Chemical mapping of a 177-nucleotide RNA with DMS. Reactivities are given for positions 27 through 126. The DMS profile rests on 900 reads.
[RMDB]
RNA sequence: GGGAACGACUCGAGUAGAGUCGAAAAGAGCCAGACUUCGGUCUGGCUCAAAGUGGACGAGGAGCGCUGAACCCACACAAAACAAGACAGCGCAUAAUAAAAAAAGGUUCGACUUCGGUCGAACCAAUCCGUAUUAAAACUUCGGUUUUAAUACGGAAAAAGAAACAACAACAACAAC
Reactivity to DMS in 0.01 (KOAc 150mM, MgCl2 10mM, bicine 150mM(pH8.5), 24C), signal-to-noise 1, nucleotides 027 to 126: g000a030g000c010c000a000g000a020c000u010u000c220g030g060u000c000u020g010g000c010u000c000a020a000a090g000u000g000g000a060c130g030a090g010g030a300g010c020g010c000u000g000a200a070c050c010c000a020c000a080c150a040a070a030a030c130a090a000g010a080c020a010g000c010g010c020a130u010a050a080u020a020a050a130a110a060a080a190g000g000u000u000c020g000a010c000u000u010c180g030g020u000c020g000a000a000c000c000a000a020
The reactions ran in a buffer of 150 mM KOAc, 10 mM MgCl2 and 150 mM bicine (pH 8.5), at 24 C.